[RMDB]
RNA sequence: GGGAACGACUCGAGUAGAGUCGAAAAGAUAUGGACGUGCCACUGGCCAGCAACAGCUGGGAUCGGAAACGAUCCCAGACAUGCUGGGUGCACGUCCUAAGUCAAAACUCCGAGUUCGCUCGGAGAACUUCCCCACGAAGUUCGCUUCGUGGGGAAGAAAAGAAACAACAACAACAAC
Reactivity to DMS in 0.01 (KOAc 150mM, MgCl2 10mM, bicine 150mM(pH8.5), 24C), signal-to-noise 1, nucleotides 027 to 126: g000a010u000a300u010g010g000a010c010g000u000g000c070c160a270c200u060g060g060c040c000a000g040c000a070a180c300a080g000c020u000g000g000g000a010u000c000g000g000a120a080a170c010g000a020u000c000c000c010a010g010a000c000a180u000g000c010u000g000g020g000u030g010c070a010c000g000u000c010c000u000a000a100g010u000c010a120a040a160a100c020u000c010c000g010a010g000u010u010c130g000c010u000c000g020g010a000g000a010a100
Reactivity to 2A3 in 0.01 (KOAc 150mM, MgCl2 10mM, bicine 150mM(pH8.5), 24C), signal-to-noise 1, nucleotides 027 to 126: g020a020u090a090u180g000g000a000c000g030u010g090c120c090a100c200u240g300g190c010c010a010g020c020a040a180c020a180g040c010u000g000g000g000a000u000c000g020g000a050a070a010c000g000a000u030c040c010c010a000g000a010c000a050u150g000c010u020g000g000g000u050g000c010a010c000g000u000c000c010u000a000a000g000u000c030a080a000a060a100c010u010c010c000g020a020g000u000u200c270g040c180u000c000g030g000a000g010a000a020